Chemical mapping of a 177-nucleotide RNA with 2A3 and DMS. The 2A3 profile rests on 1,899 reads. Source: RMDB library TTRDEL, as collected in RNAgym.
RNA sequence: GGGAACGACUCGAGUAGAGUCGAAAAGAUAUGGACUGAUCUGGGCCACUACUAUUCGGAAACGAACGAAUAGUGGAACUACCCAUCUCAGUCCUAAGUCAAAGCCAGACGGUUCGCCGUCUGGCAACCAGUACCGAAUCUUCGGAUUCGGUACUGGAAAAGAAACAACAACAACAAC
Reactivity to 2A3 in 0.01 (KOAc 150mM, MgCl2 10mM, bicine 150mM(pH8.5), 24C), signal-to-noise 1, nucleotides 027 to 126: g020a000u030a040u200g000g010a020c000u000g010a000u040c020u000g000g000g030c010c010a100c000u040a000c000u010a020u000u000c010g090g000a270a260a160c130g140a110a010c020g010a240a250u000a000g000u030g000g010a020a020c040u120a050c000c000c000a000u030c010u000c020a000g000u010c000c000u010a060a010g030u000c030a140a090a000g000c000c000a000g000a000c010g000g070u080u180c300g070c130c010g000u000c000u000g000g000c000a000a000
Reactivity to DMS in 0.01 (KOAc 150mM, MgCl2 10mM, bicine 150mM(pH8.5), 24C), signal-to-noise 2, nucleotides 027 to 126: g010a030u040a300u010g000g000a010c010u000g000a000u000c110u010g070g080g020c100c300a270c000u000a010c080u000a030u020u000c030g000g000a070a060a210c300g010a100a150c050g010a010a010u000a010g020u000g010g010a020a090c120u000a220c000c020c000a000u010c170u000c000a020g000u000c000c000u000a060a060g010u000c010a080a150a150g000c000c010a000g000a010c030g000g000u030u000c150g030c000c000g030u000c000u020g000g000c010a000a010
Notes: Reactivities are given for positions 27 through 126. The RNA was probed in 150 mM KOAc, 10 mM MgCl2 and 150 mM bicine (pH 8.5) at 24 C.